[RMDB]
About this RNA:
The record gives the reactivity of an RNA of 177 nucleotides to 2A3 and DMS. The DMS profile rests on 4,696 reads. For 2A3, 13,947 sequencing reads were counted. The RNA was probed in 150 mM KOAc, 10 mM MgCl2 and 150 mM bicine (pH 8.5) at 24 C. In probing experiments dimethyl sulfate is read out at A N1 and C N3, which are open when not base-paired. For 2A3 the reverse transcriptase was SuperScript II with manganese. It was measured as part of the RMDB library TTRINS.
RNA sequence: GGGAACGACUCGAGUAGAGUCGAAAAGAUAUGGAACGAUUACGCUUGGAUUUAUACAGGAUGACGCCAUAUAUCGGAAACGAUAUAUGGUGUAAACUGUAUUGUCAGCGUAACCGUUCCUAAGUCACGAUCAAUUAAUCUUCGGAUUAAUUGAUCGAAAAGAAACAACAACAACAAC
Reactivity to 2A3 in 0.01 (KOAc 150mM, MgCl2 10mM, bicine 150mM(pH8.5), 24C), signal-to-noise 4, nucleotides 027 to 126: g030a020u090a060u250g000g000a010a010c010g020a030u010u020a000c000g000c030u140u300g220g000a090u280u300u110a020u050a010c000a010g050g010a170u300g050a040c000g000c000c000a000u010a000u010a000u010c010g010g040a110a060a040c000g010a000u000a000u000a000u000g000g010u010g000u000a000a000a000c000u000g000u000a000u000u010g010u000c010a000g000c000g000u000a000a000c000c010g000u000u000c000c000u000a030a040g040u010c030a010
Reactivity to DMS in 0.01 (KOAc 150mM, MgCl2 10mM, bicine 150mM(pH8.5), 24C), signal-to-noise 5, nucleotides 027 to 126: g030a060u000a300u010g000g010a000a000c000g010a020u000u000a000c010g000c010u000u020g010g000a030u010u000u010a000u000a000c000a000g000g000a080u000g020a250c300g000c000c000a000u000a010u000a000u000c000g010g000a120a150a210c000g010a010u010a000u000a000u000g000g000u000g020u000a000a300a300c000u000g000u000a000u000u000g000u010c010a030g000c000g000u000a010a000c010c010g000u000u000c000c000u000a010a060g020u000c050a300